Source: RMDB library M2PK50, as collected in RNAgym. An RNA of 177 nucleotides, treated with DMS and read out base by base. Reactivities are given for positions 27 through 126. The reactions ran in a buffer of 150 mM KOAc, 10 mM MgCl2 and 150 mM bicine (pH 8.5), at 24 C.
[RMDB]
RNA sequence: GGGAACGACUCGAGUAGAGUCGAAAAUGAUUGCUCUUCGGAGCAAUCACACUACCGAGGUUGUUGCUCGGUAUAAACAACAAACCCUUGGAAACAAGGCAAGAAGAAAACGAUUCGUCGUUUUCAACAGCGUAUAAAGGUUCGCCUUUAUACGCUGAAAAGAAACAACAACAACAAC
Reactivity to DMS in 0.01 (KOAc 150mM, MgCl2 10mM, bicine 150mM(pH8.5), 24C), signal-to-noise 4, nucleotides 027 to 126: u000g010a020u010u000g010c000u010c000u000u020c180g030g010a020g020c010a000a000u010c000a040c110a140c090u000a130c000c000g010a010g020g010u000u000g010u000u000g020c010u000c010g010g010u020a020u000a040a050a050c090a050a070c070a040a120a130c300c000c000u010u000g000g000a150a090a180c000a010a000g010g000c280a050a050g000a090a100g000a000a000a010a010c010g020a010u010u030c180g010u000c010g020u010u000u000u000c000a070a200